[RMDB]
RNA sequence: GGGAACGACUCGAGUAGAGUCGAAAAUUGCCGAUCGGUAUGGAUGCCACCGUGACGGCUCAAUCACACAAGUGCCAACGAUAACGAGGCGCUCGCUAUUGCUGGGUAACUGACGGCCUGACGGUCUAAAACAGAUUCGUGUUCGCACGAAUCUGAAGGGUUAGAGGAAGUUCGCUUCCUCUAACCCAAAAGAAACAACAACAACAAC
Reactivity to 2A3 in 0.01 (KOAc 150mM, MgCl2 10mM, bicine 150mM(pH8.5), 24C), signal-to-noise 2, nucleotides 027 to 156: u080u020g000c010c000g030a130u110c060g030g010u060a080u160g130g130a140u130g120c020c020a020c040c010g030u080g120a090c060g010g000c020u080c020a100a090u110c010a010c010a020c040a090a010g030u010g050c010c010a060a040c040g060a040u110a040a030c040g000a020g300g000c080g040c070u020c030g000c010u080a070u070u100g010c070u040g080g050g010u060a070a040c000u010g050a030c020g020g000c000c020u050g000a030c050g010g020u000c070u090a050a090a020a020c000a010g000a000u000u000c000g000u000g010u040u030c040g000c050a010c000g000a000a000u000c000u010g010a040a000
This 207-nucleotide RNA was probed chemically with 2A3. The RNA was probed in 150 mM KOAc, 10 mM MgCl2 and 150 mM bicine (pH 8.5) at 24 C.